[RMDB]
RNA sequence: GGGAACGACUCGAGUAGAGUCGAAAAGAUAUGGAGCUUCAUCGAUCUACACAUCGGAAACGAUGUAAGUAGGGAGAAGACUCCUAAGUCAAACCAGAGACAAGAACUUCGGUUCUUGUCUCUGGAACAGCAAAUAUAGGUUCGCCUAUAUUUGCUGAAAAGAAACAACAACAACAAC
Reactivity to DMS in 0.01 (KOAc 150mM, MgCl2 10mM, bicine 150mM(pH8.5), 24C), signal-to-noise 6, nucleotides 027 to 126: g000a030u010a300u010g000g000a020g010c020u000u000c010a170u000c090g000a290u010c000u000a010c010a090c010a000u000c000g010g010a100a050a210c000g000a010u000g010u000a030a070g020u000a000g000g000g000a260g000a030a030g000a100c000u000c000c010u000a030a090g010u000c030a090a140a150c010c000a020g000a010g000a010c000a010a000g000a010a010c000u000u010c210g040g010u000u000c000u000u000g000u000c000u000c000u000g000g000a010a070
Reactivity to 2A3 in 0.01 (KOAc 150mM, MgCl2 10mM, bicine 150mM(pH8.5), 24C), signal-to-noise 5, nucleotides 027 to 126: g030a000u070a050u190g000g000a000g010c020u050u000c020a250u290c030g050a040u020c010u010a010c030a000c010a020u010c010g040g000a060a070a030c010g000a010u010g000u010a090a080g000u000a000g010g030g010a050g020a010a020g040a150c000u000c000c000u020a130a020g060u030c050a080a050a080c010c010a010g000a000g000a000c000a010a000g010a010a010c030u130u300c300g120g000u000u000c000u000u000g000u000c000u000c000u000g000g000a000a010

Notes
Chemical mapping of a 177-nucleotide RNA with DMS and 2A3. It was measured as part of the RMDB library TTRDEL. The RNA was probed in 150 mM KOAc, 10 mM MgCl2 and 150 mM bicine (pH 8.5) at 24 C. For DMS the reverse transcriptase was MarathonRT. For DMS, 8,413 sequencing reads were counted.